[RMDB]
Chemical mapping of a 207-nucleotide RNA with DMS and 2A3. The reactions ran in a buffer of 150 mM KOAc, 10 mM MgCl2 and 150 mM bicine (pH 8.5), at 24 C.
RNA sequence: GGGAACGACUCGAGUAGAGUCGAAAACGGAUUAGGCGUGGAGGCGAAAGUCACCCUCCUCGCAUUGCAAGUUCGUGCUUGCGACUUACACGUAGGGCGAGGGGUGGGCGAAAGUUGCCAUGAGACCAAAAUAUGUAGUUCUUCGGAACUACAUAAAUGCAUUACAUACGUUCGCGUAUGUAAUGCAAAAAGAAACAACAACAACAAC
Reactivity to DMS in 0.01 (KOAc 150mM, MgCl2 10mM, bicine 150mM(pH8.5), 24C), signal-to-noise 2, nucleotides 027 to 156: c030g000g010a150u000u010a050g020g000c010g010u010g000g020a050g000g050c060g000a080a120a160g020u000c040a090c040c010c000u020c000c010u000c010g050c010a090u000u010g020c050a030a060g020u000u000c060g070u000g030c150u000u000g000c030g010a080c000u000u010a070c050a080c140g020u000a100g010g000g000c020g000a050g020g020g030g010u020g000g000g040c000g020a050a070a140g010u010u000g000c010c030a070u000g010a140g010a130c040c030a040a070a050a160u000a000u010g000u000a010g000u000u000c010u000u010c300g030g020a010a010c000u000a010c000a000u000a000a080a130
Reactivity to 2A3 in 0.01 (KOAc 150mM, MgCl2 10mM, bicine 150mM(pH8.5), 24C), signal-to-noise 4, nucleotides 027 to 156: c060g030g040a140u110u150a100g070g010c000g030u020g020g040a030g010g000c030g040a170a060a000g070u040c030a090c010c000c000u040c000c000u020c000g000c010a020u010u090g000c000a000a020g020u130u230c110g060u240g060c020u030u050g000c000g060a030c020u060u140a040c110a000c070g140u100a090g010g130g030c050g020a030g020g020g000g010u180g030g000g000c030g020a050a020a010g070u070u050g030c010c010a030u040g040a010g020a050c020c020a020a000a040a140u070a000u040g000u000a000g000u010u000c000u030u010c200g050g000a000a000c010u010a010c000a000u000a000a010a000
The DMS profile rests on 3,928 reads. The 2A3 profile rests on 2,721 reads. DMS adducts were read by reverse transcription with MarathonRT. 2A3 adducts were read by reverse transcription with SuperScript II with manganese. The data come from the RNA Mapping Database (RMDB), library M2RFPK.